[RMDB]
RNA sequence: GGGAACGACUCGAGUAGAGUCGAAAAUAUUAUAGCGCACUAAAGACGCUGAUGUUUAGUUACCAAGGAACUUUAGUGCUGAGGUCCGAGUUCCAAGGUCCCAUGUCGGACCUUAGCACUAAUUGAAACAAGGAACAACGUUCGCGUUGUUCCUUGUAAAAGAAACAACAACAACAAC
Reactivity to DMS in 0.01 (KOAc 150mM, MgCl2 10mM, bicine 150mM(pH8.5), 24C), signal-to-noise 2, nucleotides 027 to 126: u040a020u000u000a170u000a040g010c000g040c110a180c150u010a060a100a130g010a160c020g000c000u000g020a020u000g010u000u000u000a110g010u000u000a140c050c020a090a120g000g010a100a050c060u000u000u000a000g010u000g000c020u000g040a030g010g000u000c010c000g000a040g000u000u010c240c080a040a110g000g030u000c020c020c020a190u010g020u000c000g000g000a000c000c000u000u000a000g000c000a000c010u000a000a000u000u000g000a090a060